This 177-nucleotide RNA was probed chemically with DMS and 2A3. Reactivities are given for positions 27 through 126. It was measured as part of the RMDB libraries RFM100 and RFMREP. The RNA was probed in 150 mM KOAc, 10 mM MgCl2 and 150 mM bicine (pH 8.5) at 24 C. Values are in units of 0.01, from 0 to 300, in steps of 10.
[RMDB]
RNA sequence: GGGAACGACUCGAGUAGAGUCGAAAAUUAUGCUCUGCAUAAAAAUGGGGCAUUGUCCAUGUGCCGACUUUGCAGAGGAACGGCGCAAACAAAGGCAAAUUCGACUGACGGAGGAACGGAGUCACCAGGGAUAUAUUCGGUUCGCCGAAUAUAUCCCAAAAGAAACAACAACAACAAC
Reactivity to DMS in 0.01 (KOAc 150mM, MgCl2 10mM, bicine 150mM(pH8.5), 24C), signal-to-noise 2, nucleotides 027 to 126: u040u070a000u040g000c000u020c040u000g000c050a070u020a040a030a100a120a150u020g010g000g020g030c030a050u010u010g000u010c010c040a150u030g030u000g000c000c010g000a090c090u010u000u010g030c160a070g010a040g000g000a070a100c080g000g000c010g010c000a080a170a100c140a000a050a080g010g000c060a040a060a130u000u000c020g000a030c060u020g000a090c040g010g010a070g000g000a120a050c120g000g000a060g000u020c020a070c040c030a120
Reactivity to 2A3 in 0.01 (KOAc 150mM, MgCl2 10mM, bicine 150mM(pH8.5), 24C), signal-to-noise 5, nucleotides 027 to 126: u120u050a030u070g020c000u000c030u100g030c050a040u200a130a130a030a040a060u250g030g000g010g000c000a000u010u060g040u010c020c020a050u050g010u020g000c000c000g060a140c090u080u080u220g040c120a040g010a030g130g020a050a080c030g000g000c000g000c000a050a060a090c030a050a100a030g090g000c040a030a000a070u070u030c010g010a010c010u020g020a030c050g050g050a050g050g000a100a050c040g010g010a050g040u010c000a030c070c030a050